An RNA of 177 nucleotides, treated with 2A3 and DMS and read out base by base. 2A3 adducts were read by reverse transcription with SuperScript II with manganese.
RNA sequence: GGGAACGACUCGAGUAGAGUCGAAAAGGCUUUGGCCGUGGCCGCGGGUGAGAUUCGGCGCCCAGAGCCCCCGGGGGCCUCAGCUCACCGCGCGCUGCCCCAUGUGCGGCGGUGAAACCCAGGCCCCCUACCAAUCGGAAUUCGUUCCGAUUGGUAGAAAAGAAACAACAACAACAAC
Reactivity to 2A3 in 0.01 (KOAc 150mM, MgCl2 10mM, bicine 150mM(pH8.5), 24C), signal-to-noise 9, nucleotides 027 to 126: g020g000c020u050u050u060g070g000c110c070g020u030g160g010c010c000g000c030g020g010g050u150g070a180g010a210u210u180c030g030g000c000g010c000c000c000a000g000a000g000c010c020c000c000c010g000g000g000g000g000c000c000u030c060a040g020c010u000c000a000c000c000g000c000g010c000g000c020u060g020c020c000c010c020a110u170g060u070g020c080g030g000c000g020g000u010g000a080a040a030c030c040c010a000g000g000c000c000c000c000
Reactivity to DMS in 0.01 (KOAc 150mM, MgCl2 10mM, bicine 150mM(pH8.5), 24C), signal-to-noise 9, nucleotides 027 to 126: g000g010c000u000u020u030g010g020c090c090g010u010g010g020c000c000g010c300g000g000g010u010g010a110g000a180u030u020c060g000g000c010g000c050c000c000a040g010a120g010c000c000c010c010c010g010g000g010g010g000c000c000u000c140a120g010c240u000c000a010c000c010g010c010g010c010g010c000u010g000c050c020c010c040a110u020g000u020g010c000g010g020c000g000g000u000g000a000a050a090c120c140c300a070g000g000c000c000c000c000
For DMS the reverse transcriptase was MarathonRT. Values cover nucleotides 27 to 126.